The data come from the RNA Mapping Database (RMDB), libraries RFM100 and RFMREP.
This 177-nucleotide RNA was probed chemically with DMS and 2A3.
DMS (dimethyl sulfate) methylates the pairing face of unpaired adenines and cytosines.
Conditions: 150 mM KOAc, 10 mM MgCl2 and 150 mM bicine (pH 8.5), 24 C.
DMS adducts were read by reverse transcription with MarathonRT.
RNA sequence: GGGAACGACUCGAGUAGAGUCGAAAAGCGAGCGAGGCGGGCCCACAGCCCCCGCCGCGGAGCCGAGGGCAAGGUCUGGUGCCAGCAGCCGCGGUAAUUCCAGCUCGGCGAGCGUCGCGCGGCGCUGUCCUAAUUGAGUAUUCGUACUCAAUUAGGAAAAAGAAACAACAACAACAAC
Reactivity to DMS in 0.01 (KOAc 150mM, MgCl2 10mM, bicine 150mM(pH8.5), 24C), signal-to-noise 9, nucleotides 027 to 126: g010c030g010a090g010c020g000a070g020g010c060g010g010g010c040c040c100a120c190a130g000c040c030c010c010c010g000c010c010g000c050g000g000a180g010c060c040g000a070g010g010g000c040a110a100g010g010u020c050u010g000g010u020g000c030c010a070g020c060a110g010c020c020g000c020g000g000u010a070a110u020u010c050c040a180g000c010u000c010g000g010c080g000a090g010c010g010u010c040g000c080g010c070g010g000c040g010c030u010g000
Reactivity to 2A3 in 0.01 (KOAc 150mM, MgCl2 10mM, bicine 150mM(pH8.5), 24C), signal-to-noise 9, nucleotides 027 to 126: g050c020g020a010g010c020g010a010g030g040c060g010g020g000c010c040c010a120c020a020g020c010c000c000c000c010g010c000c000g000c020g010g030a010g030c020c040g050a130g030g030g030c060a060a060g050g030u050c060u090g090g020u110g040c010c010a030g020c060a020g030c020c050g000c010g000g010u030a040a060u140u030c030c010a010g000c010u010c010g050g020c020g030a040g020c020g030u060c030g000c020g010c100g090g010c010g000c010u030g030